[RMDB]
RNA sequence: GGGAACGACUCGAGUAGAGUCGAAAAUAAGGUGCGGAGCCGUAGCGAAAGCGAGUUUUAACUGAGCGUUCAGUUACUUGACGUAGACCCGAAACCGGGCGACCUACCCAUGAGCAGGAUGAAGCGAAAUACGCCACGGAUUCGUCCGUGGCGUAUUAAAAGAAACAACAACAACAAC
Reactivity to DMS in 0.01 (KOAc 150mM, MgCl2 10mM, bicine 150mM(pH8.5), 24C), signal-to-noise 1, nucleotides 027 to 126: u020a030a160g000g000u010g000c080g020g000a100g000c030c000g020u000a080g000c050g000a120a060a100g060c000g000a040g000u000u000u000u000a000a120c020u010g000a060g020c200g000u030u000c000a000g030u000u000a030c070u000u000g010a140c050g040u000a010g000a120c040c030c100g000a130a040a100c050c060g000g020g000c050g000a120c060c000u000a060c000c010c050a040u000g000a120g030c030a100g000g000a050u000g000a110a030g020c000g020a040
Reactivity to 2A3 in 0.01 (KOAc 150mM, MgCl2 10mM, bicine 150mM(pH8.5), 24C), signal-to-noise 2, nucleotides 027 to 126: u080a020a060g020g000u020g060c020g000g000a060g070c000c000g000u000a010g030c040g060a080a040a000g000c010g010a010g020u030u030u000u200a050a050c020u000g000a010g110c120g190u170u090c000a000g000u000u010a030c030u040u050g040a030c000g020u020a020g080a200c000c010c000g180a120a100a120c070c000g010g030g000c020g070a050c000c050u050a030c000c000c060a050u140g000a000g130c030a000g020g030a000u080g050a190a050g000c150g010a010